Chemical mapping of a 177-nucleotide RNA with 2A3 and DMS. For DMS the reverse transcriptase was MarathonRT.

[RMDB]
RNA sequence: GGGAACGACUCGAGUAGAGUCGAAAAGAAGUCCGACGAGAUCGCGGCUGGGGCUUAGGACCCCACCCCUGCGAGACAGGAGUAAUCCUAAACAGGGUUUUCACCCUUCCUUUAGUUUCCUUCCUCUUAUCUUGUUAAAGUUCGCUUUAACAAGAUAAAAAGAAACAACAACAACAAC
Reactivity to 2A3 in 0.01 (KOAc 150mM, MgCl2 10mM, bicine 150mM(pH8.5), 24C), signal-to-noise 4, nucleotides 027 to 126: g060a050a020g080u000c000c010g010a050c040g060a100g020a140u040c010g000c020g010g000c040u000g020g010g010g000c030u110u110a120g110g180a290c000c010c000c010a020c000c010c000c000u040g010c010g040a050g010a030c040a010g000g020a020g020u090a050a060u040c010c000u020a030a020a050c290a070g040g000g000u040u070u170u230c060a050c000c000c000u010u020c020c010u030u040u030a030g000u020u030u030c010c000u030u060c010c010u050c040u010
Reactivity to DMS in 0.01 (KOAc 150mM, MgCl2 10mM, bicine 150mM(pH8.5), 24C), signal-to-noise 5, nucleotides 027 to 126: g000a100a140g010u000c020c010g000a150c130g000a150g010a120u010c040g030c030g010g010c260u000g010g010g010g010c040u000u020a140g020g000a190c010c000c000c010a040c080c050c050c050u000g020c010g000a050g010a110c120a230g000g000a040g010u000a090a080u010c060c010u000a020a050a060c200a060g000g000g000u000u000u010u010c140a110c010c010c010u000u000c030c020u000u000u000a070g010u000u010u000c030c030u000u010c030c020u000c120u010
The RNA was probed in 150 mM KOAc, 10 mM MgCl2 and 150 mM bicine (pH 8.5) at 24 C. The data come from the RNA Mapping Database (RMDB), library VIROID.